The data come from the RNA Mapping Database (RMDB), library OK3TST. This 207-nucleotide RNA was probed chemically with 2A3.

[RMDB]
RNA sequence: GGGAACGACUCGAGUAGAGUCGAAAAUACUUGUGGGUGGUCAACGUCUCGCCGACAUCCGCGCCGAAACCUGUGACGACGUUAAAGACGCCCGUGGGAAAGCCGGCCUGUUCGACAAGCUUUGCGAACUCAAGUGUCGAAGCAGACGUGAACUCCGCGUCUUGUAAGUGUUCGCACUUACAAGACGAAAAGAAACAACAACAACAAC
Reactivity to 2A3 in 0.01 (KOAc 150mM, MgCl2 10mM, bicine 150mM(pH8.5), 24C), signal-to-noise 2, nucleotides 027 to 156: u230a080c070u040u060g020u150g110g080g000u100g010g040u050c090a090a110c040g010u000c000u020c120g000c020c000g010a010c010a020u040c050c060g060c120g000c080c010g070a140a160a120c020c010u050g020u080g140a070c070g010a020c010g000u020u090a200a100a110g070a020c000g130c070c120c000g000u110g020g000g000a130a000a030g060c010c000g000g020c000c060u030g040u000u000c010g080a100c120a080a030g050c110u120u190u190g040c030g010a060a030c020u000c160a100a070g010u010g000u000c000g040a090a020g060c020a000g020a000c000g000u030g030a020a050c010u000c010c010g010
Notes:
Values are in units of 0.01, from 0 to 300, in steps of 10. For 2A3, 583 sequencing reads were counted.